Structure probing data (2A3 and DMS) for a 177-nucleotide construct. Values cover nucleotides 27 to 126. The RNA was probed in 150 mM KOAc, 10 mM MgCl2 and 150 mM bicine (pH 8.5) at 24 C.
[RMDB]
RNA sequence: GGGAACGACUCGAGUAGAGUCGAAAAAGAAUCUCCUUCGGGAGAUUCUGAACCACUAAGCUGAUUGCCGAUGACGACGAGGCAGCUCGUGUCGAGCAACCACCGAGAACAGGUUCGCCUGUUCUAAGUAGUAAUCAGCUUUCGAGCUGAUUACUACAAAAGAAACAACAACAACAAC
Reactivity to 2A3 in 0.01 (KOAc 150mM, MgCl2 10mM, bicine 150mM(pH8.5), 24C), signal-to-noise 3, nucleotides 027 to 126: a000g000a000a000u000c000u000c010c020u010u040c170g090g000g000a000g000a000u000u020c000u000g010a000a010c020c000a030c110u100a070a060g050c080u040g060a090u020u040g020c010c000g030a060u120g210a050c060g010a000c010g010a070g150g240c090a030g020c030u000c010g000u030g000u000c020g030a070g050c000a010a010c010c010a020c040c070g130a030g000a020a000c000a010g030g050u040u010c240g070c050c000u010g000u000u000c010u010a060a060
Reactivity to DMS in 0.01 (KOAc 150mM, MgCl2 10mM, bicine 150mM(pH8.5), 24C), signal-to-noise 4, nucleotides 027 to 126: a010g000a010a000u000c000u000c000c000u000u000c200g030g010g000a010g010a000u000u000c010u000g010a100a210c020c000a100c260u010a070a070g000c120u000g000a040u000u000g010c010c020g010a060u000g010a050c070g000a070c040g020a090g000g040c210a100g010c040u000c010g010u000g000u010c010g000a120g010c020a020a030c000c010a030c140c120g010a050g010a010a030c010a010g010g010u000u010c210g020c010c000u000g000u000u000c000u000a030a080
For DMS, 3,465 sequencing reads were counted. It was measured as part of the RMDB library M2PK50.